The record gives the reactivity of an RNA of 177 nucleotides to 2A3 and DMS. The data come from the RNA Mapping Database (RMDB), library OK2TRN. Reactivities are given for positions 27 through 126. The RNA was probed in 150 mM KOAc, 10 mM MgCl2 and 150 mM bicine (pH 8.5) at 24 C.

RNA sequence: GGGAACGACUCGAGUAGAGUCGAAAAGCGCGGGCCGUCUGGGUCACUCCUCGCCGCAGGGCGCCCGACGCCUCUGGCCGCGCCGGUUGGCGCGGACUUCUGCGGUCCGGCGCGGAUCGGCUGCGCAAUCAUAAUUUUAGUUCGCUAAAAUUAUGAUAAAAGAAACAACAACAACAAC
Reactivity to 2A3 in 0.01 (KOAc 150mM, MgCl2 10mM, bicine 150mM(pH8.5), 24C), signal-to-noise 4, nucleotides 027 to 126: g000c010g010c020g020g040g040c040c010g020u020c020u070g130g060g000u060c030a030c140u140c020c020u070c050g070c020c010g030c040a020g020g000g010c030g020c030c090c020g070a090c010g000c020c010u040c070u010g030g010c020c030g080c080g020c040c000g180g120u170u180g160g030c000g060c010g010g010a020c000u120u050c020u070g030c010g040g040u030c050c080g040g000c070g010c010g020g010a070u160c050g000g000c030u050g000c020g000c000a010
Reactivity to DMS in 0.01 (KOAc 150mM, MgCl2 10mM, bicine 150mM(pH8.5), 24C), signal-to-noise 5, nucleotides 027 to 126: g010c010g010c010g010g010g000c020c010g020u000c020u000g010g010g020u000c060a120c170u000c090c080u000c200g010c010c030g000c050a040g000g000g020c050g000c030c080c060g010a130c010g010c020c020u000c140u000g000g010c020c060g040c090g030c010c000g010g010u010u010g040g030c010g080c020g000g010a020c030u000u010c070u000g010c030g000g000u000c110c050g020g010c020g000c010g000g000a010u010c020g020g000c010u000g010c010g000c030a170